[RMDB]
RNA sequence: GGGAACGACUCGAGUAGAGUCGAAAAUGGUUGUAGCUGGAGUCUAGAAUUCCAAACAAAGUAAUGCAGUAACAGAAAACCAAAUACUGCAAUUUGUCACUUACAGGUGGCAGCUAAACUUUGAAUACACAUGGACAUAGAGAUAGGAACAAUAGAAUGCUAAUUACCUCUUCGGAGGUAAUUAGCAAAAAGAAACAACAACAACAAC
Reactivity to 2A3 in 0.01 (KOAc 150mM, MgCl2 10mM, bicine 150mM(pH8.5), 24C), signal-to-noise 1, nucleotides 027 to 156: u130g070g000u020u040g050u040a020g000c000u010g050g000a050g040u040c020u040a020g040a160a040u100u020c020c010a050a000a000c010a000a070a000g100u140a110a010u110g020c000a020g030u070a060a010c050a090g170a140a130a080a000c090c030a060a100a060u070a000c010u010g040c000a010a060u140u130u010g000u040c000a040c000u120u300a130c040a070g130g040u000g030g000c030a000g000c050u170a000a010a010c010u050u010u020g010a020a020u160a080c070a000c000a080u110g030g000a030c010a040u160a010g010a000g020a070u080a000g000g100a040a020c030a090a000u280a040g020a120a000
Reactivity to DMS in 0.01 (KOAc 150mM, MgCl2 10mM, bicine 150mM(pH8.5), 24C), signal-to-noise 1, nucleotides 027 to 156: u000g000g060u010u010g020u000a020g070c010u000g010g040a100g040u000c000u020a080g000a200a120u020u000c080c030a080a190a160c020a000a040a080g010u000a180a240u000g000c000a020g010u010a030a300c100a100g010a090a140a130a090c130c030a070a080a190u000a030c050u040g000c030a020a200u000u020u000g070u000c000a030c040u000u020a170c120a100g020g010u000g020g000c000a030g000c130u000a030a050a050c010u000u000u000g000a070a120u010a110c040a050c140a060u000g010g010a090c040a140u010a070g000a080g000a080u000a090g000g000a050a030c000a020a220u000a080g000a130a110